[RMDB]
RNA sequence: GGGAACGACUCGAGUAGAGUCGAAAAUGUCACACAGUAGCGAGGGAUGCAAUUAAUUGCAUCUACACCAAGCUCAAGGCUUGCAUUUCGACUAGUGUCGAGUCGUUCCCACUCGCUACGCCCACAAAUCUUUAGGGAACUUCGGUUCCCUAAAGAUAAAAGAAACAACAACAACAAC
Reactivity to DMS in 0.01 (KOAc 150mM, MgCl2 10mM, bicine 150mM(pH8.5), 24C), signal-to-noise 2, nucleotides 027 to 126: u000g010u000c160a080c180a140c120a080g060u020a010g010c000g000a050g010g000g020a010u000g010c000a000a020u000u010a060a070u010u000g000c000a010u000c010u010a090c130a130c170c030a010a020g020c000u010c190a100a120g020g000c000u000u000g000c020a020u000u000u000c010g010a000c020u000a040g010u020g000u000c000g010a000g000u000c000g000u000u010c010c000c010a000c000u000c010g020c010u000a000c020g020c060c000c030a070c220a060a080
The record gives the reactivity of an RNA of 177 nucleotides to DMS.
For DMS, 2,166 sequencing reads were counted.
The data come from the RNA Mapping Database (RMDB), library M2PK90.
Reactivities are rounded to 0.1 and cut off at 0 and 3.